An RNA of 177 nucleotides, treated with 2A3 and DMS and read out base by base. Conditions: 150 mM KOAc, 10 mM MgCl2 and 150 mM bicine (pH 8.5), 24 C. The 2A3 profile rests on 987 reads.

[RMDB]
RNA sequence: GGGAACGACUCGAGUAGAGUCGAAAACGUGGCACUUGUGUGGUGAUUUGGUAUAUCAAACUCUUAACGGAAUUGCUUCGGGUUCGCCUAUUACAGCAGAGCUUAACUCUGAGGUGAAUAAAUAUUACCCUACGAACCUAUUCGUAGGUUCGUAGGGAAAAGAAACAACAACAACAAC
Reactivity to 2A3 in 0.01 (KOAc 150mM, MgCl2 10mM, bicine 150mM(pH8.5), 24C), signal-to-noise 2, nucleotides 027 to 126: c030g000u040g060g000c060a020c050u070u020g070u030g000u010g250g070u060g130a150u070u010u160g080g100u130a130u030a030u300c030a000a060a060c060u040c030u150u080a030a070c010g010g060a110a030u090u010g040c000u020u020c020g010g000g010u020u040c010g030c010c000u050a110u050u120a030c000a050g000c010a010g010a000g040c030u100u140a090a070c000u030c000u030g010a010g050g000u040g050a020a010u060a090a090a040u210a010u090u250a090
Reactivity to DMS in 0.01 (KOAc 150mM, MgCl2 10mM, bicine 150mM(pH8.5), 24C), signal-to-noise 1, nucleotides 027 to 126: c060g010u000g000g020c050a050c130u000u000g000u020g040u000g010g010u000g010a110u020u000u000g040g000u020a200u000a100u020c090a100a040a040c080u000c020u000u020a110a110c090g040g000a020a090u010u000g020c000u000u020c030g010g020g000u010u000c090g000c020c060u010a040u010u000a000c170a070g000c010a020g000a030g000c190u020u010a200a170c010u000c010u010g000a010g000g010u000g050a020a080u000a000a030a090u000a090u010u010a160